[RMDB]
RNA sequence: GGGAACGACUCGAGUAGAGUCGAAAAGAUAUGGAUGACUGUUAGAUUCGAAGAACGUAAGGAUGUGGUAAAUAUCGGAAACGAUAUUUACCACAUCCUUACGGGAGAAUUUAAUUCAUCCUAAGUCCCUACUCCAAGUGUUCGCACUUGGAGUAGGAAAAGAAACAACAACAACAAC
Reactivity to DMS in 0.01 (KOAc 150mM, MgCl2 10mM, bicine 150mM(pH8.5), 24C), signal-to-noise 1, nucleotides 027 to 126: g040a100u010a290u010g000g020a010u000g010a070c300u040g010u000u000a010g020a000u000u000c000g010a140a080g000a200a060c000g000u000a020a000g000g000a000u010g010u000g020g000u000a010a010a010u000a010u000c000g000g020a100a080a260c000g020a000u000a010u040u000u000a000c000c000a010c000a000u000c000c000u000u000a000c000g000g010g000a070g010a000a010u000u000u000a010a000u010u000c000a000u000c010c000u000a060a090g020u010c060
Chemical mapping of a 177-nucleotide RNA with DMS.
The RNA was probed in 150 mM KOAc, 10 mM MgCl2 and 150 mM bicine (pH 8.5) at 24 C.
Values cover nucleotides 27 to 126.